An RNA of 177 nucleotides, treated with 2A3 and DMS and read out base by base. Reactivities are given for positions 27 through 126. The RNA was probed in 150 mM KOAc, 10 mM MgCl2 and 150 mM bicine (pH 8.5) at 24 C. Source: RMDB library 15KREP, as collected in RNAgym.

RNA sequence: GGGAACGACUCGAGUAGAGUCGAAAAUUGGAGAGCACCUCGGGCCGAAGGGUUGAGUAGCACUCAAAGGGAGGAAUCCACUCGGAGUAGAACAGAGAAAUCACCUCCAGAGGACCCCUUCAGCGAAGUAUACCAAUAACUUCGGUUAUUGGUAUACAAAAGAAACAACAACAACAAC
Reactivity to 2A3 in 0.01 (KOAc 150mM, MgCl2 10mM, bicine 150mM(pH8.5), 24C), signal-to-noise 2, nucleotides 027 to 126: u070u050g010g020a040g010a010g030c020a030c010c040u020c020g040g080g050c030c020g040a050a020g060g010g000u030u000g000a010g010u070a020g050c040a020c070u030c000a050a040a000g050g000g010a060g030g030a060a060u010c020c010a020c020u050c050g050g020a010g030u090a070g060a160a020c090a060g070a000g030a050a070a030u050c000a030c010c010u000c010c010a020g010a020g000g000a020c020c010c010c020u040u040c020a020g040c010g010a060a010
Reactivity to DMS in 0.01 (KOAc 150mM, MgCl2 10mM, bicine 150mM(pH8.5), 24C), signal-to-noise 3, nucleotides 027 to 126: u020u010g020g020a070g000a090g000c060a080c100c030u000c080g010g010g040c040c040g000a070a070g010g010g030u010u010g000a040g000u000a070g020c090a300c050u000c020a020a120a120g000g000g000a020g030g000a060a120u010c030c030a100c080u000c100g000g000a020g010u010a150g010a060a180c210a150g000a060g000a090a070a110u000c040a160c110c000u010c020c020a090g000a060g010g000a110c050c030c010c010u000u000c040a100g010c130g000a050a090